This 177-nucleotide RNA was probed chemically with 2A3 and DMS. For 2A3 the reverse transcriptase was SuperScript II with manganese. The reactions ran in a buffer of 150 mM KOAc, 10 mM MgCl2 and 150 mM bicine (pH 8.5), at 24 C. Values cover nucleotides 27 to 126.
RNA sequence: GGGAACGACUCGAGUAGAGUCGAAAAGAAAGUUGUACGCCACAAGAGUAUCAUCAUAUCUAUGGUGAAUAUCCUGAAUGGUACAACCAGGAAGAAGAAGUAUGAUCCAGUAUUGGUGGCUUGAGCCGUCGAUCAACAACUUCGGUUGUUGAUCGACAAAAGAAACAACAACAACAAC
Reactivity to 2A3 in 0.01 (KOAc 150mM, MgCl2 10mM, bicine 150mM(pH8.5), 24C), signal-to-noise 1, nucleotides 027 to 126: g000a010a000a000g010u000u000g000u020a010c000g000c070c020a020c050a070a010g000a000g120u060a000u000c010a010u010c000a010u110a030u120c150u290a090u000g010g010u000g000a090a060u060a010u120c010c010u040g030a100a090u160g060g030u030a000c000a010a010c020c010a020g110g070a110a080g020a010a060g000a040a000g060u110a020u120g010a040u000c050c000a010g080u120a140u080u110g040g000u040g030g000c050u090u070g070a020g050c000c010
Reactivity to DMS in 0.01 (KOAc 150mM, MgCl2 10mM, bicine 150mM(pH8.5), 24C), signal-to-noise 2, nucleotides 027 to 126: g010a200a150a100g040u000u000g010u000a050c050g000c080c060a060c090a220a030g000a110g010u000a060u000c000a010u000c010a010u000a160u000c280u010a060u000g000g020u000g010a060a090u000a090u000c020c020u010g000a190a090u000g010g010u000a010c010a020a000c050c120a060g000g000a060a060g000a070a090g010a060a100g030u010a130u000g000a170u000c060c040a080g040u010a120u000u020g010g010u000g000g010c070u000u000g020a080g010c040c060